[RMDB]
The record gives the reactivity of an RNA of 207 nucleotides to 2A3. 2A3 is a SHAPE reagent: it acylates the 2'-hydroxyl of flexible nucleotides of all four kinds. Conditions: 150 mM KOAc, 10 mM MgCl2 and 150 mM bicine (pH 8.5), 24 C. For 2A3 the reverse transcriptase was SuperScript II with manganese. It was measured as part of the RMDB library RNAMAK.
RNA sequence: GGGAACGACUCGAGUAGAGUCGAAAACGCUGGGCAUAUCCUCACAUCGAUCUUUCAGCAAGCAACAGCCUGAAGCGCGCACGGGCUGUUGUGAUGACCUGAAAGGGAGUGAGGUAAGUGCCUGUGCUGAAGCGCGCACGGCAACCGAAAGGUGCGAUCUUAUGGCUAGCUUCGGCUAGCCAUAAGAAAAAGAAACAACAACAACAAC
Reactivity to 2A3 in 0.01 (KOAc 150mM, MgCl2 10mM, bicine 150mM(pH8.5), 24C), signal-to-noise 1, nucleotides 027 to 156: c030g010c000u130g010g000g000c000a020u000a130u240c010c010u080c000a030c030a160u300c080g000a030u000c000u000u010u000c010a030g000c050a080a120g050c010a000a030c000a020g010c000c000u060g020a160a040g000c000g000c000g000c000a030c060g000g000g000c000u000g020u000u000g000u000g000a010u030g010a010c000c020u000g000a000a010a000g010g020g000a020g020u020g000a000g010g000u060a100a000g010u000g000c000c010u000g000u040g000c020u060g040a100a060g000c010g010c010g000c010a000c000g030g020c010a080a120c030c010g080a080a060a070g010g000u010g010c020g070a090